[RMDB]
RNA sequence: GGGAACGACUCGAGUAGAGUCGAAAACUGGAUUCGACGGGAUUGGCGAAGCCCAAGGUGCACGUCGAGGUGCGGUAGGCCUCGUAAAUAAACCGCAAAAAAAUAGUCGCAAACGACGAACAAUACGCUUUAGCAGCUUAAUAACCUGCAUUUAGCCCUUACAAUAGUGCUUCGGCACUAUUGUAAGAAAAGAAACAACAACAACAAC
Reactivity to DMS in 0.01 (KOAc 150mM, MgCl2 10mM, bicine 150mM(pH8.5), 24C), signal-to-noise 1, nucleotides 027 to 156: c010u000g000g000a190u000u000c020g000a040c000g010g000g010a170u000u020g010g010c040g000a050a120g030c060c010c000a120a090g000g030u000g000c030a090c010g000u020c050g000a060g010g020u010g050c000g010g010u000a210g030g010c000c020u010c040g060u000a010a120a110u000a060a100a060c030c010g020c060a000a000a020a100a140a040a280u000a060g000u000c000g010c070a040a070a210c040g000a020c020g000a060a130c050a040a070u000a110c070g010c020u010u000u010a070g000c020a020g030c010u000u000a190a070u000a150a020c280c020u020g020c020a160u000u010u000a050g000c040c110
Reactivity to 2A3 in 0.01 (KOAc 150mM, MgCl2 10mM, bicine 150mM(pH8.5), 24C), signal-to-noise 2, nucleotides 027 to 156: c030u040g080g030a050u090u040c030g020a010c020g070g010g040a050u050u060g050g000c130g070a060a030g010c030c030c000a010a020g090g030u080g020c070a020c150g060u060c020g090a040g020g000u020g020c000g030g020u030a050g040g070c000c020u040c010g100u120a010a050a030u040a030a020a020c000c000g000c000a000a030a000a000a030a000a180u170a040g000u000c010g010c070a130a040a130c070g060a000c000g010a060a000c000a010a060u150a080c050g000c010u010u030u030a020g020c000a000g000c000u020u030a010a010u030a040a020c000c000u000g010c020a140u040u030u020a000g000c000c030

An RNA of 207 nucleotides, treated with DMS and 2A3 and read out base by base.
For DMS, 2,090 sequencing reads were counted.
2A3 adducts were read by reverse transcription with SuperScript II with manganese.
The data come from the RNA Mapping Database (RMDB), library ARCHII.